[RMDB]
RNA sequence: GGGAACGACUCGAGUAGAGUCGAAAAUGCGCAGCGUGACCACCCGUGCGGCGUCGCGCAGCGACAGCGCGCCGGCAACGUAGGCGGCAGCGAUCUCGCCUUGCGAAUGACCGAUCACCGCAUCCGGCACGGACGACCGAUUCGUCGGUCGUCCGUGAAAAGAAACAACAACAACAAC
Reactivity to DMS in 0.01 (KOAc 150mM, MgCl2 10mM, bicine 150mM(pH8.5), 24C), signal-to-noise 1, nucleotides 027 to 126: u000g070c060g000c050a080g000c030g010u000g000a130c100c070a210c110c000c020g020u000g020c130g010g000c300g000u000c000g020c010g070c010a050g000c090g000a090c120a070g030c020g000c010g010c040c000g010g010c120a050a060c110g000u000a100g010g040c040g000g020c270a040g010c060g000a000u000c030u000c000g020c000c040u000u000g010c040g010a060a050u000g000a140c080c040g000a120u030c040a050c050c000g000c040a110u000c030c030g000g010